[RMDB]
RNA sequence: GGGAACGACUCGAGUAGAGUCGAAAAAGUAUCGAGCUUUAUCUAUCAAGACUUGAAAGAAGCAAGAAAACUGUUCCAGCUUUUCAGAAGUCCGCUUUUGAUAAGUACGCAGAAGUCAAAGAUGAAGGAUAUCGCUGUGAUUCGUCACAGCGAUAUCAAAAGAAACAACAACAACAAC
Reactivity to 2A3 in 0.01 (KOAc 150mM, MgCl2 10mM, bicine 150mM(pH8.5), 24C), signal-to-noise 5, nucleotides 027 to 126: a000g130u130a080u170c060g010a010g010c010u020u040u030a050u050c050u010a060u120c070a130a050g100a140c060u070u120g060a110a050a080g080a070a030g040c070a080a030g050a100a070a020a030c030u050g000u040u030c050c020a040g010c000u040u000u000u000c010a010g000a020a010g040u080c090c140g170c110u000u000u010u020g020a040u020a040a020g040u050a050c120g010c020a020g010a130a010g010u080c060a100a100a020g070a010u100g050a040a010g070
Reactivity to DMS in 0.01 (KOAc 150mM, MgCl2 10mM, bicine 150mM(pH8.5), 24C), signal-to-noise 3, nucleotides 027 to 126: a050g030u030a050u000c010g000a120g000c030u000u010u020a090u020c040u010a190u010c150a090a060g000a080c120u040u060g000a060a090a120g010a080a060g000c030a040a160g000a040a060a050a090c060u010g000u000u020c070c070a260g000c040u000u000u010u010c030a030g000a000a080g020u000c200c240g040c010u000u000u000u000g010a040u030a010a060g020u000a060c200g000c070a070g030a030a060g010u020c020a010a070a050g000a010u000g010a150a030g010

This 177-nucleotide RNA was probed chemically with 2A3 and DMS.
The RNA was probed in 150 mM KOAc, 10 mM MgCl2 and 150 mM bicine (pH 8.5) at 24 C.
For DMS, 3,023 sequencing reads were counted.